[RMDB]
RNA sequence: GGGAACGACUCGAGUAGAGUCGAAAAUCGGCCAUUCGCCAGGCGGACAAGGCCCAGGAUGAAUAUCUGGCCAAUCGCAUCAGCCUGACCCGAAAUCUCCUGAUGGCAUCGAACCAGCUGUCGGUAUCGCGCGCCUCGGCACAAACGCUGAAGCAGAGUGAAGUUAAAUCUUCGGAUUUAACUUCACAAAAGAAACAACAACAACAAC
Reactivity to DMS in 0.01 (KOAc 150mM, MgCl2 10mM, bicine 150mM(pH8.5), 24C), signal-to-noise 2, nucleotides 027 to 156: u000c010g020g010c010c030a140u000u010c080g010c000c020a080g030g000c010g000g000a120c050a050a150g000g010c170c000c040a080g000g040a130u000g020a170a110u000a160u000c050u000g000g020c020c010a070a300u000c040g010c060a130u000c040a030g000c050c020u000g010a090c010c000c090g000a070a120a100u000c040u030c040c040u000g010a100u030g010g000c010a140u000c030g020a110a130c000c020a170g020c040u010g000u000c050g010g010u000a100u000c070g000c040g020c100g010c010c010u000c030g020g000c010a140c040a110a090a240c160g000c010u000g010a030a030g060c000a080g010a140
Reactivity to 2A3 in 0.01 (KOAc 150mM, MgCl2 10mM, bicine 150mM(pH8.5), 24C), signal-to-noise 6, nucleotides 027 to 156: u060c020g010g000c030c030a120u120u060c020g030c030c010a000g000g000c010g040g010a070c080a180a160g070g000c060c090c030a020g020g020a060u190g090a180a090u150a070u160c050u050g000g000c000c030a010a040u100c120g010c060a090u040c010a040g020c010c020u040g030a080c020c000c000g030a030a060a100u040c050u030c010c020u090g050a120u130g040g000c020a040u060c090g020a040a050c010c010a030g090c080u120g060u160c040g060g020u060a170u200c040g000c010g010c000g000c050c010u030c050g020g020c020a020c050a050a050a000c080g030c010u040g040a050a010g050c040a020g100a030
This 207-nucleotide RNA was probed chemically with DMS and 2A3. The RNA was probed in 150 mM KOAc, 10 mM MgCl2 and 150 mM bicine (pH 8.5) at 24 C. 2A3 adducts were read by reverse transcription with SuperScript II with manganese. Source: RMDB library OK3TST, as collected in RNAgym. Values cover nucleotides 27 to 156. For DMS, 2,897 sequencing reads were counted.